RNA sequence: GGGAACGACUCGAGUAGAGUCGAAAAUCCUCGUGGUCUUCCAGGCCUAGCCGCCAUACACCCGCCCCCCACCGGCUUCCAACCACCCCAGCAGCACCUCUUCGGGCGUUCCAACGCGGCGCCCCCUGUCAUACUUAUUGUUCGCAAUAAGUAUGACAAAAGAAACAACAACAACAAC
Reactivity to DMS in 0.01 (KOAc 150mM, MgCl2 10mM, bicine 150mM(pH8.5), 24C), signal-to-noise 2, nucleotides 027 to 126: u000c010c010u010c140g040u020g020g020u000c030u000u010c070c060a140g030g030c030c030u000a080g020c040c030g040c050c080a060u000a100c120a210c020c020c030g030c020c000c000c000c000c000a080c090c040g030g010c050u010u000c030c050a100a050c080c060a060c030c010c020c040a100g010c050a120g010c040a050c090c020u000c050u000u000c030g000g010g000c010g000u000u020c030c020a040a120c140g000c060g010g000c050g000c010c000c000c040c040u040